[RMDB]
RNA sequence: GGGAACGACUCGAGUAGAGUCGAAAAUCAGCGAUAACCUCGUAGUCCACCAUCGAGUAUAUGUCUAGCUCGUCUAUGUGCUUCAGGGAGUCUCUGCGCAGUAGCCCGUGUCUGUCAACGUUUAUGGUGCGCAAGCUGGCUUCGGUGAUCGCGCGCCUGAUGCUUACAAGUUCGCUUGUAAGCAUCAAAAAGAAACAACAACAACAAC
Reactivity to 2A3 in 0.01 (KOAc 150mM, MgCl2 10mM, bicine 150mM(pH8.5), 24C), signal-to-noise 1, nucleotides 027 to 156: u120c000a010g080c010g030a010u050a120a120c010c020u060c090g030u050a010g020u020c040c020a030c020c010a080u120c010g020a000g110u070a080u030a060u280g160u050c030u040a050g000c030u020c020g030u000c030u110a110u160g030u040g000c000u030u050c020a020g010g040g030a040g080u010c040u000c030u010g000c050g000c050a090g030u070a050g010c010c050c030g030u010g040u040c070u000g080u060c040a060a040c060g010u000u040u110a080u050g000g000u040g010c010g000c000a030a020g040c000u050g060g060c000u170u200c100g030g010u040g040a080u100c040g000c000g010c000g000c000c000
Reactivity to DMS in 0.01 (KOAc 150mM, MgCl2 10mM, bicine 150mM(pH8.5), 24C), signal-to-noise 2, nucleotides 027 to 156: u000c050a100g050c080g030a110u000a030a170c050c030u000c050g030u000a120g010u000c080c030a080c010c030a220u000c040g020a080g040u010a100u020a090u000g030u010c060u000a130g030c030u000c000g040u000c070u000a120u010g000u010g040c020u000u010c050a110g020g030g000a270g020u000c010u000c020u000g030c130g000c060a110g020u000a080g000c000c000c010g030u010g010u000c010u000g020u000c040a090a110c170g030u010u000u000a040u000g030g040u000g040c010g030c010a060a180g020c000u010g010g000c080u000u000c040g020g010u000g010a130u000c060g040c030g050c040g020c030c020